[RMDB]
RNA sequence: GGGAACGACUCGAGUAGAGUCGAAAAUUGGCCUGACUGUAUUUCGAUCAGCAAGAAAUUCAGAGGCGAAAGCCGGGCCUAGCGAACCUCAGAGUCCUCCUUGAUGGGGGCCUGAGAUGACAGAAAAGACUUAUACUCAGUUCGCUGAGUAUAAGUCAAAAGAAACAACAACAACAAC
Reactivity to 2A3 in 0.01 (KOAc 150mM, MgCl2 10mM, bicine 150mM(pH8.5), 24C), signal-to-noise 2, nucleotides 027 to 126: u040u040g010g000c010c000u040g130a180c000u010g000u030a000u000u020u000c020g030a100u160c050a020g190c040a110a110g000a030a020a000u070u040c020a010g040a080g060g000c010g000a040a030a000g020c000c010g010g000g000c020c000u020a020g010c030g040a020a040c000c000u000c000a010g060a060g080u050c010c000u000c010c030u080u170g170a280u230g040g000g000g000g000c000c000u020g000a000g000a030u080g030a020c040a060g130a030a100a020a020
Reactivity to DMS in 0.01 (KOAc 150mM, MgCl2 10mM, bicine 150mM(pH8.5), 24C), signal-to-noise 3, nucleotides 027 to 126: u000u030g010g010c000c000u010g030a170c010u020g000u010a010u000u000u000c000g000a180u020c220a140g040c240a180a150g010a020a020a010u000u010c010a040g010a300g030g000c020g010a040a080a190g020c010c010g010g050g020c010c000u000a030g010c090g010a090a060c060c010u000c010a000g000a120g000u000c000c000u000c000c020u020u010g000a100u010g010g000g000g010g000c060c000u000g000a010g000a010u010g010a070c090a080g010a150a080a100a090